[RMDB]
Notes:
This 207-nucleotide RNA was probed chemically with 2A3 and DMS. High DMS reactivity at an A or C suggests that its Watson-Crick edge is free. The data come from the RNA Mapping Database (RMDB), library OK3TST. The reactions ran in a buffer of 150 mM KOAc, 10 mM MgCl2 and 150 mM bicine (pH 8.5), at 24 C. The 2A3 profile rests on 1,653 reads.
RNA sequence: GGGAACGACUCGAGUAGAGUCGAAAAGUCGUGAGUACGCUGCGCGACCAUGAGCAAGUACAUAGAACAAGCCGAACGGAACGACGACGGCGACUUGAUAUUUGAAAAGACCGUGCCGACGCCGGGAGGUGGUACAACGACCGUUGACGUGAACGUGCCAAUAUACCACGUUCGCGUGGUAUAUUGGAAAAGAAACAACAACAACAAC
Reactivity to 2A3 in 0.01 (KOAc 150mM, MgCl2 10mM, bicine 150mM(pH8.5), 24C), signal-to-noise 4, nucleotides 027 to 156: g000u020c020g010u010g040a030g020u030a030c120g000c140u080g060c030g000c000g060a090c060c030a090u160g030a030g070c040a090a050g020u010a050c020a060u190a090g150a150a060c060a070a010g010c000c000g010a040a050c000g000g020a120a230c010g050a010c010g020a010c010g070g010c050g030a020c010u020u090g090a050u160a260u230u220u270g070a070a090a000a000g070a090c020c010g030u050g070c040c010g030a070c070g000c010c000g020g010g010a020g000g010u020g010g020u030a030c030a070a030c050g050a020c030c060g050u060u080g060a070c070g010u050g080a080a040c030g020u070g050
Reactivity to DMS in 0.01 (KOAc 150mM, MgCl2 10mM, bicine 150mM(pH8.5), 24C), signal-to-noise 1, nucleotides 027 to 156: g000u000c040g030u000g010a160g020u010a020c040g040c030u000g020c090g030c040g010a170c110c060a060u000g020a110g000c080a060a120g020u030a080c020a140u040a150g030a090a200c050a040a200g000c000c010g040a300a300c010g010g020a080a210c060g030a090c000g010a040c010g010g020c000g010a000c000u010u000g020a130u000a140u000u010u010g030a060a150a020a090g020a070c020c020g000u000g030c050c000g030a020c040g060c040c020g020g020g010a300g000g020u010g000g000u000a020c030a160a100c010g000a020c010c040g000u010u010g000a120c010g020u000g000a030a140c050g050u000g000